[RMDB]
RNA sequence: GGGAACGACUCGAGUAGAGUCGAAAAGAUAUGGACUGAAUGCACGAUAAGACGGCAUCGGAAACGAUGCCCGUCUUUUGACGUGCGCGUCCUAAGUCAAACGUGCUAAUCUUCGGAUUAGCACGAAGGGAGCAUGUAGGUUCGCCUACAUGCUCCCAAAAGAAACAACAACAACAAC
Reactivity to 2A3 in 0.01 (KOAc 150mM, MgCl2 10mM, bicine 150mM(pH8.5), 24C), signal-to-noise 1, nucleotides 027 to 126: g010a030u060a030u140g040g000a030c090u110g110a290a150u240g000c020a000c000g050a060u030a160a000g010a000c000g000g000c000a000u000c000g000g010a070a040a030c000g000a000u010g050c050c000c010g020u070c000u000u000u000u010g060a010c000g000u010g000c000g000c010g000u000c000c020u000a100a010g050u010c010a040a050a100c030g000u000g000c000u010a000a000u020c000u040u140c300g050g000a000u000u010a000g050c000a000c000g010a000a000
Reactivity to DMS in 0.01 (KOAc 150mM, MgCl2 10mM, bicine 150mM(pH8.5), 24C), signal-to-noise 1, nucleotides 027 to 126: g030a010u020a300u010g000g000a020c010u040g030a020a060u000g010c000a000c000g010a140u000a000a080g000a020c010g000g010c000a000u000c000g020g000a080a050a170c000g000a000u000g000c110c040c010g000u000c000u000u000u010u020g000a140c020g040u000g020c010g000c070g000u000c000c000u000a010a130g000u020c040a140a080a200c020g000u000g000c000u000a000a000u000c010u000u010c270g020g010a010u010u000a000g010c000a000c000g030a030a060
Chemical mapping of a 177-nucleotide RNA with 2A3 and DMS. The RNA was probed in 150 mM KOAc, 10 mM MgCl2 and 150 mM bicine (pH 8.5) at 24 C. The data come from the RNA Mapping Database (RMDB), library TTRDEL. For DMS, 1,200 sequencing reads were counted.